[RMDB]
RNA sequence: GGGAACGACUCGAGUAGAGUCGAAAAAACCCUGUGCUCAUUGGUGAACCAGGUGUUGGUAAAACUGCAAUUGUUGAAGGAUUAGCGCAACGUAUAGUUAAGAAAGAUGUGCCAGAAUCAUUAUUAGAUCCUCUACUCGAUUCGUCGAGUAGAGGAUAAAAGAAACAACAACAACAAC
Reactivity to DMS in 0.01 (KOAc 150mM, MgCl2 10mM, bicine 150mM(pH8.5), 24C), signal-to-noise 2, nucleotides 027 to 126: a060a020c040c000c000u020g040u010g000c070u000c000a110u030u020g040g010u010g020a080a100c050c060a040g000g000u030g020u000u000g000g000u030a040a090a080a030c070u040g000c150a100a080u000u050g000u000u000g000a120a130g000g000a070u000u000a080g000c050g010c030a010a000c070g040u010a070u000a120g000u000u030a050a110g030a110a090a080g020a020u000g000u000g010c030c080a060g010a030a050u040c110a040u000u020a110u050u030a130g020
Reactivity to 2A3 in 0.01 (KOAc 150mM, MgCl2 10mM, bicine 150mM(pH8.5), 24C), signal-to-noise 1, nucleotides 027 to 126: a000a000c130c060c040u070g000u200g000c000u000c080a150u070u090g000g070u060g070a090a090c000c000a010g010g110u210g000u040u110g060g060u210a030a030a030a000c150u150g100c130a070a070u060u070g090u060u010g010a060a050g050g000a000u000u000a010g000c110g000c070a100a000c150g170u120a140u180a080g230u080u250a040a000g010a010a190a000g140a080u170g040u070g070c000c000a190g150a110a010u000c000a090u000u300a000u040u000a110g000
Chemical mapping of a 177-nucleotide RNA with DMS and 2A3. Conditions: 150 mM KOAc, 10 mM MgCl2 and 150 mM bicine (pH 8.5), 24 C. The DMS profile rests on 2,827 reads. DMS adducts were read by reverse transcription with MarathonRT.